The record gives the reactivity of an RNA of 207 nucleotides to DMS and 2A3.
RNA sequence: GGGAACGACUCGAGUAGAGUCGAAAAGGAUCCCUGGUCGGAAUUCGGUCUACGACGACCGGGCGUCCGUGCCAAGCGAUGCGUCACUAGGGGGUAAGACUCGGAAGGGUCUCUCUCCCGGGUGGAAAAGGACAACCGUAUGGCUCAGGCCCGAAAGGUUUCUUAUAAUGUUCGCAUUAUAAGAAACAAAAGAAACAACAACAACAAC
Reactivity to DMS in 0.01 (KOAc 150mM, MgCl2 10mM, bicine 150mM(pH8.5), 24C), signal-to-noise 2, nucleotides 027 to 156: g020g010a030u000c280c010c000u010g020g040u030c010g010g010a180a130u010u000c040g010g030u000c080u000a090c060g030a300c030g010a040c000c000g020g000g030c070g020u000c010c010g000u010g000c030c030a060a300g020c020g000a050u010g000c030g000u000c020a050c020u000a130g040g010g040g020g010u000a050a030g020a000c010u010c010g040g080a180a250g000g010g000u000c010u000c030u010c010u000c000c000c000g000g060g000u000g030g010a060a090a070a100g000g010a120c050a090a050c020c000g020u000a100u000g030g010c000u000c060a100g000g020c000c000c030g000a110a140a300g010
Reactivity to 2A3 in 0.01 (KOAc 150mM, MgCl2 10mM, bicine 150mM(pH8.5), 24C), signal-to-noise 4, nucleotides 027 to 156: g030g000a050u050c000c010c010u030g010g020u010c020g030g120a140a190u140u070c040g000g080u140c220u220a080c030g070a040c010g010a010c000c010g000g010g000c060g020u000c010c010g030u030g010c000c000a010a000g000c000g030a010u040g010c020g060u070c010a020c060u080a080g000g000g010g000g010u030a020a020g000a010c000u010c010g000g150a070a060g070g010g000u000c000u000c000u000c000u000c020c000c000g000g010g010u020g010g040a070a110a030a030g110g040a060c030a070a020c090c000g010u040a050u070g060g000c010u020c080a080g010g000c000c010c020g050a080a050a010g080
2A3 adducts were read by reverse transcription with SuperScript II with manganese. Conditions: 150 mM KOAc, 10 mM MgCl2 and 150 mM bicine (pH 8.5), 24 C. For 2A3, 2,987 sequencing reads were counted. Reactivities are given for positions 27 through 156.